[RMDB]
RNA sequence: GGGAACGACUCGAGUAGAGUCGAAAAGAGCGUCGAGAGACGAAGAGAAGUGCACCGAUCAGCAAAGGCGAACGUAAUGGUGCACAAGAGUAAGUCAGUGUAACGUUCUCCGGGCACUGGAGGCAGAGGUGAUAUCCGGUUUCGACCGGAUAUCACCAAAAGAAACAACAACAACAAC
Reactivity to DMS in 0.01 (KOAc 150mM, MgCl2 10mM, bicine 150mM(pH8.5), 24C), signal-to-noise 2, nucleotides 027 to 126: g020a070g060c040g000u000c010g000a250g000a210g000a020c000g000a090a000g000a050g000a180a110g010u010g000c020a000c000c040g000a300u040c130a120g030c190a060a170a150g050g000c060g000a020a000c120g030u010a040a180u030g040g000u000g000c020a000c020a060a060g030a030g000u040a080a210g000u000c050a090g080u000g000u060a110a040c010g030u000u000c100u000c040c000g000g030g000c070a130c000u000g000g010a000g000g000c220a020g000a130
Reactivity to 2A3 in 0.01 (KOAc 150mM, MgCl2 10mM, bicine 150mM(pH8.5), 24C), signal-to-noise 2, nucleotides 027 to 126: g100a020g010c020g000u000c000g030a020g000a010g000a030c010g050a120a020g050a000g060a160a070g000u020g000c000a000c010c000g100a250u160c020a050g030c030a020a090a210g160g020c090g050a080a030c010g000u050a080a080u080g000g050u000g000c000a000c000a000a000g020a010g080u230a160a040g010u030c070a010g000u000g010u050a120a000c010g020u090u000c020u000c010c000g040g000g000c070a040c000u080g000g070a010g000g070c010a030g050a050